The record gives the reactivity of an RNA of 207 nucleotides to 2A3 and DMS. Conditions: 150 mM KOAc, 10 mM MgCl2 and 150 mM bicine (pH 8.5), 24 C. For 2A3 the reverse transcriptase was SuperScript II with manganese. Values cover nucleotides 27 to 156. The DMS profile rests on 7,413 reads. High 2A3 reactivity points to a flexible backbone, as in loops and unpaired stretches.
RNA sequence: GGGAACGACUCGAGUAGAGUCGAAAAACAAAGGAUGUUGCUUACUACGGAUAGCAGGUCGGUGGCCAUGAAGGUUGGAACCCGCUGAGGAAUGUGUAACAACUCACCUGCCGAAGUGCGCAGCUCCGAAAAUGGAUGGUGCCCAAGUCAGUGUGUCGUUAUUGAUAUACUUCGGUAUAUCAAUAACAAAAGAAACAACAACAACAAC
Reactivity to 2A3 in 0.01 (KOAc 150mM, MgCl2 10mM, bicine 150mM(pH8.5), 24C), signal-to-noise 6, nucleotides 027 to 156: a010c090a020a070a010g050g010a100u250g010u040u020g000c020u050u050a020c020u020a010c020g050g040a070u100a090g060c010a010g020g010u080c070g030g030u040g010g030c010c000a040u070g050a080a040g050g020u090u090g050g030a090a090c010c040c020g000c040u040g020a020g020g040a300a040u050g050u030g010u090a110a030c020a030a050c030u030c070a020c010c010u010g000c010c010g020a060a010g010u010g010c020g000c020a010g010c000u000c010c000g060a080a070a010a030u080g020g010a030u030g010g030u040g000c000c010c010a040a020g040u050c050a020g030u020g010u020g030u160c080
Reactivity to DMS in 0.01 (KOAc 150mM, MgCl2 10mM, bicine 150mM(pH8.5), 24C), signal-to-noise 3, nucleotides 027 to 156: a070c060a120a110a170g020g020a080u010g020u010u000g010c020u000u020a100c040u010a130c020g000g000a200u030a070g010c020a020g010g040u000c030g000g040u000g010g010c010c040a130u000g010a170a130g030g010u000u000g020g010a090a130c020c010c030g010c080u010g020a160g000g000a080a080u010g000u000g010u000a060a070c070a040a120c030u010c080a080c000c000u000g000c010c030g010a150a130g000u000g010c120g000c050a070g040c040u000c010c000g020a030a050a070a020u000g020g000a070u000g000g010u010g000c010c010c010a020a300g020u010c040a050g010u000g010u000g020u000c070